[RMDB]
RNA sequence: GGGAACGACUCGAGUAGAGUCGAAAACAAACGUUCGCGUUUGCAGGAAUCCUAAGUCGACGAUAAGAUAUCGAGCUCAUCGAUCAUAUCGGAAACGAUAUGGGAGAGCGAGAUAUCUUUUGACGUCGAUAUGGAAAGGAGCUGGCUUCGGCCAGAACCGUAUCAGUUUGUUCGCAAACUGAUACGGAAAAGAAACAACAACAACAAC
Reactivity to 2A3 in 0.01 (KOAc 150mM, MgCl2 10mM, bicine 150mM(pH8.5), 24C), signal-to-noise 4, nucleotides 027 to 156: c000a000a020a000c030g060u090u110c290g030c040g020u050u000u090g060c090a040g080g120a110a130u070c020c000u060a150a050g010u010c010g000a010c000g020a050u000a060a000g000a000u000a000u000c000g010a020g020c010u000c010a300u280c110g090a090u040c000a010u000a000u000c000g030g020a050a080a060c010g000a000u000a000u000g000g000g000a050g000a000g000c010g000a000g000a000u000a010u000c000u000u000u000u020g050a010c000g000u000c000g010a000u000a030u070g030g020a040a090a110g100g040a060g070c010u000g000g000c000u040u130c300g090g000c020c010a010g010a000a020

Structure probing data (2A3) for a 207-nucleotide construct. The reactions ran in a buffer of 150 mM KOAc, 10 mM MgCl2 and 150 mM bicine (pH 8.5), at 24 C. For 2A3 the reverse transcriptase was SuperScript II with manganese.